[RMDB]
RNA sequence: GGGAACGACUCGAGUAGAGUCGAAAAGAGUUCUUGACGACAUGACGUCAUCACUGACAAUUAAAGAUAGUUCCCUUCGUUCGGGUUGACUAUCGUCGGAGAUGUGGACGAGCGCCUAAUCUUCUCUGCUGGCUUUGAACUUCGGUUCAAAGCCAGCAAAAGAAACAACAACAACAAC
Reactivity to 2A3 in 0.01 (KOAc 150mM, MgCl2 10mM, bicine 150mM(pH8.5), 24C), signal-to-noise 1, nucleotides 027 to 126: g030a000g040u080u050c040u090u120g070a030c030g020a010c040a080u190g110a090c120g030u070c000a070u030c050a000c030u000g000a040c010a040a090u190u160a110a170a000g080a040u020a020g030u050u020c000c000c000u080u100c000g000u010u180c090g000g110g000u120u270g000a000c000u000a000u000c040g000u020c000g020g000a110g000a000u090g010u020g060g080a090c030g000a040g020c000g040c030c010u060a040a050u020c000u040u020c000u000c060u000